[RMDB]
RNA sequence: GGGAACGACUCGAGUAGAGUCGAAAAGAUAUGGAUCGCUGACAAGCGAUAAGUUCCACUCGGAAACGAGUGAGAACUUUUGACGCUUGGAUGCGAUCCUAAGUCAAACGACAGCUUCGGCUGUCGACCAGGAUUAUUUCUUCGGAAAUAAUCCUGGAAAAGAAACAACAACAACAAC
Reactivity to 2A3 in 0.01 (KOAc 150mM, MgCl2 10mM, bicine 150mM(pH8.5), 24C), signal-to-noise 3, nucleotides 027 to 126: g030a020u070a040u120g000g000a000u020c010g000c030u050g110a100c010a010a000g010c020g030a030u060a090a010g000u000u020c000c000a000c000u000c000g010g020a080a080a060c010g010a000g010u000g020a220g010a010a010c000u030u020u030u060g130a040c030g000c010u000u000g000g020a030u120g000c000g010a000u000c000c000u000a010a010g010u000c020a100a050a070c030g000a000c000a000g030c010u130u140c300g250g010c000u000g000u000c000g000a020
Reactivity to DMS in 0.01 (KOAc 150mM, MgCl2 10mM, bicine 150mM(pH8.5), 24C), signal-to-noise 3, nucleotides 027 to 126: g010a070u010a300u010g010g000a020u000c000g030c000u010g010a300c020a010a000g010c000g010a090u000a010a010g010u000u000c000c000a040c000u000c010g000g000a110a090a150c000g010a020g010u010g000a110g010a000a000c000u000u000u000u000g000a270c070g010c000u000u000g000g000a300u000g000c000g030a000u000c010c000u000a000a110g000u010c050a120a100a260c020g000a010c000a000g000c000u010u010c260g030g010c000u000g000u000c000g000a120